[RMDB]
RNA sequence: GGGAACGACUCGAGUAGAGUCGAAAAGAUAUGGAGCAUGCAUAACAACAGCCGUGAUAUCGGAAACGAUAUACGGACAUGUUAGCAUGCUCCUAAGUCAAAACUAUUAGUGUUCGCACUAAUAGAAGUCUAACUUGAACUUCGGUUCAAGUUAGACAAAAGAAACAACAACAACAAC
Reactivity to 2A3 in 0.01 (KOAc 150mM, MgCl2 10mM, bicine 150mM(pH8.5), 24C), signal-to-noise 2, nucleotides 027 to 126: g020a000u000a010u050g000g000a000g000c000a020u000g000c070a200u050a110a030c230a080a060c090a300g010c000c000g040u130g250a050u000a000u030c000g000g000a010a000a000c000g020a000u020a000u000a000c000g000g020a000c020a070u300g000u000u000a000g000c000a010u010g010c010u020c010c000u000a000a000g000u010c000a020a020a070a090c010u000a000u020u020a000g030u010g060u080u070c300g040c100a000c000u010a000a010u020a030g050a050a010
Reactivity to DMS in 0.01 (KOAc 150mM, MgCl2 10mM, bicine 150mM(pH8.5), 24C), signal-to-noise 2, nucleotides 027 to 126: g010a020u000a030u020g000g000a010g020c010a010u000g000c000a100u000a000a010c010a210a100c260a160g000c000c000g030u000g010a050u000a000u000c000g020g000a000a000a000c030g050a020u010a000u020a000c010g010g010a010c040a120u020g020u000u000a000g000c000a010u000g000c000u000c010c000u000a000a030g000u020c010a130a080a120a260c010u000a000u000u000a000g020u000g000u000u000c260g020c030a000c000u010a010a000u000a010g010a060a150

The record gives the reactivity of an RNA of 177 nucleotides to 2A3 and DMS.
2A3 adducts were read by reverse transcription with SuperScript II with manganese.
Reactivities are rounded to 0.1 and cut off at 0 and 3.
Conditions: 150 mM KOAc, 10 mM MgCl2 and 150 mM bicine (pH 8.5), 24 C.
DMS adducts were read by reverse transcription with MarathonRT.
The DMS profile rests on 1,833 reads.